[RMDB]
RNA sequence: GGGAACGACUCGAGUAGAGUCGAAAAGAUAUGGAUGUCCUCCCCACCAAACAUUCCCUAUGAAGUCGGAAACGAUGGAGGGAUUGUUUGAGGGACAUCCUAAGUCAAACCCUGGUUCGCCAGGGAAGCAAUUAUCUAUGUUCGCAUAGAUAAUUGCAAAAGAAACAACAACAACAAC
Reactivity to 2A3 in 0.01 (KOAc 150mM, MgCl2 10mM, bicine 150mM(pH8.5), 24C), signal-to-noise 6, nucleotides 027 to 126: g070a080u220a140u280g000g010a000u010g010u010c010c000u070c070c020c010c000a030c000c020a010a000a000c000a010u030u110c000c000c000u280a300u300g010a020a010g020u000c010g010g020a060a040a040c010g000a010u010g000g040a000g020g010g000a000u010u000g010u000u010u000g040a020g000g000g000a000c000a000u000c000c000u020a060a020g120u050c110a130a040a300c010c000c010u020g000g080u070u100c300g050c080c000a000g000g030g000a010a020
Reactivity to DMS in 0.01 (KOAc 150mM, MgCl2 10mM, bicine 150mM(pH8.5), 24C), signal-to-noise 5, nucleotides 027 to 126: g000a080u000a190u010g010g010a010u000g010u010c010c010u010c130c010c000c050a300c100c000a020a010a010c000a020u000u000c000c000c000u010a300u010g010a120a160g000u000c010g000g000a090a090a140c020g000a010u000g000g000a010g020g010g000a010u000u000g000u000u000u000g000a140g000g000g010a010c000a000u000c000c010u000a010a050g000u010c130a130a070a110c000c000c000u000g000g010u000u000c140g020c000c000a010g000g000g010a010a040
Structure probing data (2A3 and DMS) for a 177-nucleotide construct. The data come from the RNA Mapping Database (RMDB), library TTRDEL. The RNA was probed in 150 mM KOAc, 10 mM MgCl2 and 150 mM bicine (pH 8.5) at 24 C. The 2A3 profile rests on 13,340 reads. For DMS, 5,066 sequencing reads were counted. For 2A3 the reverse transcriptase was SuperScript II with manganese.